Structure probing data (DMS and 2A3) for a 177-nucleotide construct.
Source: RMDB library OK2TRN, as collected in RNAgym.
The DMS profile rests on 7,689 reads.
Conditions: 150 mM KOAc, 10 mM MgCl2 and 150 mM bicine (pH 8.5), 24 C.
[RMDB]
RNA sequence: GGGAACGACUCGAGUAGAGUCGAAAAUGCAUGGCUGUCGUCAGCUCGUGUCGUGAGAUGUUGGGUUAAGUCCCGCAACGAGCGCAACCCUUGUCACUAGUUGCCAUCAUUUGGUUGGGCACUCUAGGGUAACAUCAAAGUUCGCUUUGAUGUUACCAAAAGAAACAACAACAACAAC
Reactivity to DMS in 0.01 (KOAc 150mM, MgCl2 10mM, bicine 150mM(pH8.5), 24C), signal-to-noise 5, nucleotides 027 to 126: u000g010c100a040u000g010g010c030u010g020u010c120g010u000c050a130g000c010u010c030g010u000g000u010c060g010u000g010a160g010a040u000g010u000u010g020g000g000u000u020a090a150g000u000c000c020c010g000c100a080a060c040g000a090g000c030g010c110a060a100c040c020c030u010u000g000u010c090a250c030u010a040g010u000u000g010c020c010a050u010c040a060u000u000u000g020g010u000u000g010g000g020c040a040c110u000c030u000a070g000
Reactivity to 2A3 in 0.01 (KOAc 150mM, MgCl2 10mM, bicine 150mM(pH8.5), 24C), signal-to-noise 5, nucleotides 027 to 126: u120g000c040a030u050g050g000c020u040g070u230c060g080u090c050a010g000c010u020c060g020u030g040u050c040g030u040g050a080g000a040u100g030u240u300g050g000g000u080u080a150a150g300u120c020c020c010g000c010a030a030c030g020a010g010c020g000c050a030a100c020c000c000u030u140g160u080c050a030c050u020a020g030u050u040g020c010c010a170u060c020a030u060u030u060g080g000u030u050g030g010g020c040a020c030u010c020u020a050g040